[RMDB]
RNA sequence: GGGAACGACUCGAGUAGAGUCGAAAACCUGGGGUGUAACCCCCCACACCUGAUCUAAACCACCUGGGGUUAUACACCUUGGACCAAGCUAAGAUGCAUUGCGGAGCUUGUGGGUACGGUUGGGCUUAAGGAACAAACUAUUCGUAGUUUGUUCCUUAAAAGAAACAACAACAACAAC
Reactivity to DMS in 0.01 (KOAc 150mM, MgCl2 10mM, bicine 150mM(pH8.5), 24C), signal-to-noise 4, nucleotides 027 to 126: c010c010u000g010g000g000g020u000g000u010a050a090c090c080c000c000c100c040a050c200a220c040c020u000g000a050u000c060u000a050a170a150c010c020a080c060c040u000g000g000g000g010u010u020a060u020a130c120a050c000c010u010u020g010g000a300c170c050a060a030g000c010u010a140a070g020a090u030g000c060a170u020u000g000c040g000g010a100g010c000u000u010g030u020g000g000g000u020a120c260g010g000u010u000g010g010g010c200u000u030
Reactivity to 2A3 in 0.01 (KOAc 150mM, MgCl2 10mM, bicine 150mM(pH8.5), 24C), signal-to-noise 8, nucleotides 027 to 126: c000c000u010g000g000g000g010u030g020u050a030a040c010c000c000c000c030c000a040c020a010c050c000u030g020a050u060c020u100a070a130a140c010c010a030c020c020u050g010g000g020g000u040u040a100u030a070c140a060c010c010u000u030g060g010a070c030c020a020a010g020c020u110a130a040g050a150u150g060c090a230u100u300g050c050g030g020a010g020c010u040u030g030u100g050g010g020u040a030c050g020g000u010u010g000g010g010c000u010u010
Background:
Structure probing data (DMS and 2A3) for a 177-nucleotide construct. Source: RMDB libraries RFM100 and RFMREP, as collected in RNAgym. For DMS the reverse transcriptase was MarathonRT. For 2A3 the reverse transcriptase was SuperScript II with manganese.